[RMDB]
RNA sequence: GGGAACGACUCGAGUAGAGUCGAAAAGAUAUGGACAUGGCUCGCGAUAAGAAGCAUUCGGAAACGAAUGGCUUCUUUUGACGCGAACCAUGUCCUAAGUCAAAAGAUUACCGUUCGCGGUAAUCAAGUAAUAGGAAAACUUCGGUUUUCCUAUUACAAAAGAAACAACAACAACAAC
Reactivity to 2A3 in 0.01 (KOAc 150mM, MgCl2 10mM, bicine 150mM(pH8.5), 24C), signal-to-noise 3, nucleotides 027 to 126: g010a000u020a020u050g000g000a000c000a000u010g010g010c000u010c010g010c010g100a140u100a300a010g010a000a000g010c000a010u010u010c000g010g020a070a010a000c000g010a000a010u010g030g040c000u000u030c020u010u010u000u060g080a040c030g010c010g000a000a000c000c000a000u010g000u000c000c000u000a000a000g000u000c000a000a030a010a150g000a000u020u010a010c040c010g020u030u090c300g010c000g090g000u000a000a010u010c000a000a010
Reactivity to DMS in 0.01 (KOAc 150mM, MgCl2 10mM, bicine 150mM(pH8.5), 24C), signal-to-noise 5, nucleotides 027 to 126: g000a020u000a090u010g000g000a020c010a010u000g000g010c030u000c000g030c000g030a100u010a010a010g010a010a010g020c000a010u000u000c000g020g010a020a010a050c000g010a000a010u000g010g010c000u000u000c000u010u000u000u010g010a170c130g030c000g010a010a020c000c000a010u000g000u000c000c000u000a000a040g000u000c010a130a120a160a150g000a020u000u000a000c000c000g020u010u010c250g020c010g010g000u000a000a000u000c010a050a110